[RMDB]
RNA sequence: GGGAACGACUCGAGUAGAGUCGAAAAAGCACGGUUUUUGAGGACGCAUUUUGUCCGUGCGGUAAUGCCCUCCUUUACACUUUCUCGCAUGGUGCGGGAGUGUGGAGAGCAAACAAAAGCUAGUCUCGAUAGGCGGUUAACUUCGGUUAACCGCCAAGAAUAAGACCGACUUCGGUCGGUCUUAUUCAAAAGAAACAACAACAACAAC
Reactivity to 2A3 in 0.01 (KOAc 150mM, MgCl2 10mM, bicine 150mM(pH8.5), 24C), signal-to-noise 3, nucleotides 027 to 156: a000g010c000a000c000g010g000u010u010u000u010u020g080a090g030g000a000c010g000c100a110u010u010u020u030g000u010c000c000g000u000g010c040g030g020u120a080a050u130g020c000c000c000u050c010c000u050u080u030a000c000a000c000u060u200u080c020u030c020g090c070a100u220g300g010u250g140c000g030g000g000a000g000u000g030u000g000g000a030g000a000g020c060a030a020a010c000a000a010a000a000g060c020u130a030g040u000c010u010c040g050a120u140a100g000g000c000g000g000u010u000a010a010c020u020u060c250g050g000u010u000a000a000c020c010g010c000c000a000a000